[RMDB]
RNA sequence: GGGAACGACUCGAGUAGAGUCGAAAACUUGACCCAUUAGUAAGUGUGGUCAGCUGCCGAUCAGCCACGGUCUCGAUUAGUUUGAGGCCAAUAAAAGGGGAUCUGCUUAGUUCGUGACAACGAGACAGUCAUAGCAGGUCUUCGGAUCUGUUAUGACAAAAGAAACAACAACAACAAC
Reactivity to 2A3 in 0.01 (KOAc 150mM, MgCl2 10mM, bicine 150mM(pH8.5), 24C), signal-to-noise 9, nucleotides 027 to 126: c020u020u060g010a010c000c000c010a020u050u070a060g160u060a210a030g010u020g060u080g020g000u010c000a010g010c030u030g000c010c010g000a020u000c010a030g120c010c000a050c050g000g000u000c000u000c000g020a030u040u050a090g250u050u020u060g010a000g000g000c000c000a000a010u080a010a040a020a010g000g000g000g000a010u000c000u010g010c000u050u050a020g020u040u030c020g020u010g050a030c040a060a020c050g000a010g020a040c020a020
Reactivity to DMS in 0.01 (KOAc 150mM, MgCl2 10mM, bicine 150mM(pH8.5), 24C), signal-to-noise 9, nucleotides 027 to 126: c050u010u010g010a040c010c000c010a030u010u010a120g010u050a100a070g020u000g000u040g020g000u000c010a040g010c140u020g010c030c080g000a040u010c020a060g000c030c050a100c150g010g000u000c000u000c000g010a040u020u050a100g030u010u000u000g010a010g010g000c000c000a090a040u020a050a050a130a100g000g000g000g000a020u000c010u000g000c010u010u020a050g010u010u000c050g000u000g000a100c230a070a050c030g000a060g010a070c240a100
This 177-nucleotide RNA was probed chemically with 2A3 and DMS. The 2A3 profile rests on 52,560 reads. The RNA was probed in 150 mM KOAc, 10 mM MgCl2 and 150 mM bicine (pH 8.5) at 24 C. For DMS the reverse transcriptase was MarathonRT. 2A3 adducts were read by reverse transcription with SuperScript II with manganese.